[RMDB]
The record gives the reactivity of an RNA of 177 nucleotides to DMS and 2A3.
The data come from the RNA Mapping Database (RMDB), library M2PK90.
2A3 adducts were read by reverse transcription with SuperScript II with manganese.
Values cover nucleotides 27 to 126.
DMS adducts were read by reverse transcription with MarathonRT.
For DMS, 2,472 sequencing reads were counted.
RNA sequence: GGGAACGACUCGAGUAGAGUCGAAAAAUAAAUAGCGCACUAAAGACGCUGAUCUUUAGUUACCUAGGAACAUUAGUGCAGAGAUCCGAGUUCCUAGGUCCCAUGUCGGACCUUACUAAGAAAAAAAUCAUAAUUCCAAGUUCGCUUGGAAUUAUGAAAAAGAAACAACAACAACAAC
Reactivity to DMS in 0.01 (KOAc 150mM, MgCl2 10mM, bicine 150mM(pH8.5), 24C), signal-to-noise 3, nucleotides 027 to 126: a090u000a030a040a090u000a100g000c030g030c160a080c010u000a010a020a030g010a010c010g010c280u010g000a090u000c000u000u000u000a020g010u000u010a050c000c000u000a000g000g000a010a010c030a150u000u000a050g010u010g030c090a140g000a060g000a060u010c010c030g010a140g010u000u000c000c010u000a000g000g020u000c010c000c010a090u000g010u010c030g020g020a050c020c020u000u010a050c180u030a090a100g020a020a010a050a110a080a040a120
Reactivity to 2A3 in 0.01 (KOAc 150mM, MgCl2 10mM, bicine 150mM(pH8.5), 24C), signal-to-noise 2, nucleotides 027 to 126: a000u120a000a060a010u100a030g030c010g010c030a010c020u010a040a010a010g020a000c020g050c300u080g090a300u050c010u020u040u000a020g010u020u070a010c000c000u010a010g000g010a010a010c010a130u160u200a100g040u040g110c090a030g020a000g030a220u040c020c000g000a030g030u030u000c000c000u030a000g000g000u000c010c000c000a050u050g010u060c010g040g030a030c010c000u030u050a080c050u150a180a050g210a110a100a030a000a000a000a020